Background
Structure probing data (DMS) for a 177-nucleotide construct. The RNA was probed in 150 mM KOAc, 10 mM MgCl2 and 150 mM bicine (pH 8.5) at 24 C. For DMS, 1,651 sequencing reads were counted.
RNA sequence: GGGAACGACUCGAGUAGAGUCGAAAAGGUCCCGCCUCUCCUGGUCGGUGAACCCCCUGGCUUUGGAUUUCCUCCCAGGUGUAGAAUCAAUCUCCAUGUCCUCUCGCCUGGGCCUCUUCGCCGGGGGCUUAAUUAAGUGCUUCGGCACUUAAUUAAGAAAAGAAACAACAACAACAAC
Reactivity to DMS in 0.01 (KOAc 150mM, MgCl2 10mM, bicine 150mM(pH8.5), 24C), signal-to-noise 2, nucleotides 027 to 126: g010g010u010c000c000c020g020c060c030u000c060u010c040c020u000g020g010u010c040g010g010u010g010a120a140c130c000c000c010c030u000g020g000c010u020u010u020g010g010a170u010u000u000c030c050u000c010c000c000a000g010g000u020g010u020a020g010a050a080u010c050a070a080u010c080u010c140c080a090u000g000u000c140c050u000c020u000c040g000c010c000u010g000g010g020c150c010u000c100u010u010c190g020c020c000g000g010g010g000g010